The data come from the RNA Mapping Database (RMDB), library M2RFPK. Chemical mapping of a 207-nucleotide RNA with 2A3 and DMS. DMS adducts were read by reverse transcription with MarathonRT. For DMS, 1,630 sequencing reads were counted. The reactions ran in a buffer of 150 mM KOAc, 10 mM MgCl2 and 150 mM bicine (pH 8.5), at 24 C. Values cover nucleotides 27 to 156. For 2A3, 1,460 sequencing reads were counted. Values are in units of 0.01, from 0 to 300, in steps of 10.
[RMDB]
RNA sequence: GGGAACGACUCGAGUAGAGUCGAAAAAUACACCAGCAGUAGGACUCAGCGACCGUCAGAACAAGGUUGUGCUGGUAUCCGACGGUCGUAUAGCCCUGUCUUGCAGGUUGCCUUGCACUGACGUGCCACACCAUUUACAGAUUCGUCUGUAAAUGAACUUCUCUUCGAACUUCGGUUCGAAGAGAAGAAAAGAAACAACAACAACAAC
Reactivity to 2A3 in 0.01 (KOAc 150mM, MgCl2 10mM, bicine 150mM(pH8.5), 24C), signal-to-noise 2, nucleotides 027 to 156: a000u180a010c070a000c010c010a010g010c010a010g010u050a010g030g000a010c010u040c110a030g000c000g010a000c000c000g000u020c000a030g030a100a020c060a100a050g050g040u100u000g060u250g180c050u080g040g030u030a130u020c010c010g000a000c000g000g000u000c000g000u070a040u080a050g010c010c000c000u020g090u080c050u050u180g000c010a030g000g060u050u100g040c020c010u020u130g020c030a020c030u130g080a100c090g040u030g020c010c020a060c030a030c020c030a010u010u010u000a000c000a000g010a010u000u100c160g060u040c100u010g000u010a000a000a010u000g000a000a010
Reactivity to DMS in 0.01 (KOAc 150mM, MgCl2 10mM, bicine 150mM(pH8.5), 24C), signal-to-noise 1, nucleotides 027 to 156: a110u000a070c070a250c070c030a110g010c010a040g000u050a050g000g030a020c000u000c130a300g020c020g020a010c020c000g030u000c030a000g010a100a030c060a090a030g000g010u010u020g010u000g020c040u040g040g000u000a090u000c040c010g000a070c010g000g010u010c010g010u030a040u010a070g050c010c000c000u030g040u000c010u010u010g040c070a030g000g050u000u000g010c000c180u000u000g000c040a100c000u010g040a180c130g040u000g040c040c040a060c090a180c160c000a010u000u010u000a000c000a040g000a140u000u000c300g000u000c000u000g010u000a010a000a000u000g010a040a110